[RMDB]
An RNA of 177 nucleotides, treated with DMS and 2A3 and read out base by base. In probing experiments dimethyl sulfate is read out at A N1 and C N3, which are open when not base-paired. DMS adducts were read by reverse transcription with MarathonRT. The RNA was probed in 150 mM KOAc, 10 mM MgCl2 and 150 mM bicine (pH 8.5) at 24 C. The 2A3 profile rests on 6,004 reads. For DMS, 4,051 sequencing reads were counted.
RNA sequence: GGGAACGACUCGAGUAGAGUCGAAAAGAUAUGGAUAUUUGUAGUAGCGAAGAACUGCGUCGGAAACGACGCAGGGAGCUAUACACUGAUAUCCUAAGUCAAAGACGUCUGCUUCGGCAGACGUCAACUAUUAACUAAUCUUCGGAUUAGUUAAUAGAAAAGAAACAACAACAACAAC
Reactivity to DMS in 0.01 (KOAc 150mM, MgCl2 10mM, bicine 150mM(pH8.5), 24C), signal-to-noise 4, nucleotides 027 to 126: g000a050u000a300u000g000g000a010u000a010u000u000u000g010u000a130g020u010a080g000c000g010a090a200g020a140a180c000u000g010c000g030u000c000g030g000a100a100a250c000g020a010c000g010c000a000g000g000g000a040g000c000u000a080u000a070c100a060c270u000g000a020u000a000u000c010c000u010a060a180g010u010c020a110a110a140g010a020c000g020u000c000u010g000c000u010u010c260g040g030c000a010g000a000c000g020u000c000a020a100
Reactivity to 2A3 in 0.01 (KOAc 150mM, MgCl2 10mM, bicine 150mM(pH8.5), 24C), signal-to-noise 3, nucleotides 027 to 126: g030a020u070a030u160g010g000a020u020a060u090u100u150g070u080a300g080u030a030g020c040g250a300a020g000a080a020c010u030g000c010g010u000c000g000g040a070a020a040c010g010a010c030g000c000a000g000g000g000a000g000c010u020a020u070a150c090a010c070u040g040a010u010a000u050c000c000u020a110a040g050u020c060a080a010a270g000a010c010g000u000c010u000g070c010u100u080c300g150g000c000a000g000a020c000g000u010c000a000a000